[RMDB]
RNA sequence: GGGAACGACUCGAGUAGAGUCGAAAAGAGCCUGGCGUCAGUGAGAGAACUCGCUUCUGCGUUGAGUAUCAGGGCGCAGAGGGACUUCAACUGAUACUAGGCCCGCCGGAACAGGUGCCAGCGACACGUUCCGGGGCCGAGAAAGCGACACACUGGCACAGACUGAAGAGUUCGCUCUUCAGUCUGUAAAAGAAACAACAACAACAAC
Reactivity to 2A3 in 0.01 (KOAc 150mM, MgCl2 10mM, bicine 150mM(pH8.5), 24C), signal-to-noise 2, nucleotides 027 to 156: g060a030g030c020c010u020g030g020c060g000u030c030a020g020u010g050a120g000a010g010a120a070c050u050c170g080c030u040u020c000u000g000c010g000u020u030g060a050g070u080a060u140c070a040g060g050g000c000g000c000a000g010a000g010g030g010a040c060u060u040c140a150a110c010u010g010a000u000a000c000u000a010g000g000c000c010c000g040c000c000g010g000a030a000c030a060g080g000u040g030c010c010a020g000c040g110a060c000a000c080g000u010u000c000c000g010g010g000g000c030c000g010a040g090a030a120a010g110c050g100a030c030a000c000a010c150u020g010g000c010
Reactivity to DMS in 0.01 (KOAc 150mM, MgCl2 10mM, bicine 150mM(pH8.5), 24C), signal-to-noise 1, nucleotides 027 to 156: g020a180g020c010c020u010g020g000c020g070u000c070a060g020u010g020a190g060a200g000a080a140c010u000c080g010c000u010u000c030u020g050c010g070u000u020g020a090g020u010a060u000c110a130g010g000g000c000g010c020a050g000a020g000g010g010a150c070u000u000c070a220a000c000u020g000a050u000a000c000u000a230g040g010c000c000c020g040c060c020g040g000a020a020c040a230g020g040u000g000c000c000a120g010c020g050a030c050a080c030g000u010u000c000c000g000g010g000g040c000c000g000a180g000a120a070a140g020c050g000a170c130a080c000a050c000u000g000g090c060
This 207-nucleotide RNA was probed chemically with 2A3 and DMS. Values cover nucleotides 27 to 156. Source: RMDB library RSTRND, as collected in RNAgym. 2A3 adducts were read by reverse transcription with SuperScript II with manganese. For DMS the reverse transcriptase was MarathonRT.